[RMDB]
RNA sequence: GGGAACGACUCGAGUAGAGUCGAAAAAUUGCAGUGAGUCCUGCGUCUUGAUGAAAUUCAGAAACUCCCUGUCGUGACUGUUCUCGGCGAAGCGACGUGGUGAUGAGCUGCGGAACAGUCUGAGCAGAGCUUCGGAAUGUUUCGACAUUCCGAAGCUAAAAGAAACAACAACAACAAC
Reactivity to 2A3 in 0.01 (KOAc 150mM, MgCl2 10mM, bicine 150mM(pH8.5), 24C), signal-to-noise 1, nucleotides 027 to 126: a000u100u050g000c000a000g030u020g070a070g040u060c040c000u000g000c020g070u000c060u180u160g060a160u030g090a110a200a180u120u040c040a060g130a120a030a000c040u020c000c040c000u010g010u000c070g090u040g000a000c000u010g020u100u020c030u080c000g050g000c040g010a080a020g000c010g120a210c160g180u300g110g000u070g010a040u040g000a040g000c040u040g020c070g020g000a000a000c000a000g000u010c000u000g030a030g000c060a000g000
Reactivity to DMS in 0.01 (KOAc 150mM, MgCl2 10mM, bicine 150mM(pH8.5), 24C), signal-to-noise 1, nucleotides 027 to 126: a070u010u020g020c060a000g000u000g010a170g010u000c160c000u000g000c090g030u020c020u000u040g010a090u000g000a120a040a090u000u000c030a110g020a030a130a100c050u000c010c030c000u000g010u000c060g070u000g000a010c000u000g020u000u000c000u010c000g000g010c050g010a150a100g000c060g010a130c210g040u000g000g000u000g000a080u000g040a300g000c010u000g000c180g000g000a040a020c000a010g020u000c000u000g000a110g010c070a030g000